Structure probing data (2A3 and DMS) for a 177-nucleotide construct. Values cover nucleotides 27 to 126. It was measured as part of the RMDB library OK2TST. DMS adducts were read by reverse transcription with MarathonRT.
RNA sequence: GGGAACGACUCGAGUAGAGUCGAAAAGUUAAGAUGUUUGGAUCCUGGAGCUAAACAGGCUGGGUUAAAAUCCUGGUUCUGCCACUUACUAGUUUUAUGAUCCUGGAAAAGUCAUUUAAGCUCCAUAAAAUAGGAUGGAUUUCGAUCCAUCCUAUUUAAAAGAAACAACAACAACAAC
Reactivity to 2A3 in 0.01 (KOAc 150mM, MgCl2 10mM, bicine 150mM(pH8.5), 24C), signal-to-noise 1, nucleotides 027 to 126: g020u020u020a110a050g010a060u060g040u040u280u090g120g020a010u010c020c030u020g000g010a010g000c000u020a000a000a100c010a020g000g000c010u020g000g000g000u000u030a090a020a040a050u080c020c000u010g040g000u140u210c000u030g070c040c030a060c010u070u110a040c020u000a020g030u000u010u020u050a060u060g030a020u030c000c000u000g010g030a100a100a020a040g050u020c010a010u000u000u090a050a020g030c000u020c010c020a050u160a030
Reactivity to DMS in 0.01 (KOAc 150mM, MgCl2 10mM, bicine 150mM(pH8.5), 24C), signal-to-noise 4, nucleotides 027 to 126: g010u000u020a070a090g020a050u000g020u010u000u010g020g010a090u000c010c050u000g010g000a020g010c010u000a050a100a250c000a020g010g000c000u000g000g000g000u000u000a070a120a160a110u000c000c000u000g000g000u000u010c010u000g000c160c120a100c190u010u010a090c210u000a040g000u000u000u000u010a050u020g010a030u000c040c020u010g000g000a060a080a100a130g000u010c040a050u010u000u000a080a110g010c010u000c020c020a100u000a040
The RNA was probed in 150 mM KOAc, 10 mM MgCl2 and 150 mM bicine (pH 8.5) at 24 C. For 2A3, 1,583 sequencing reads were counted.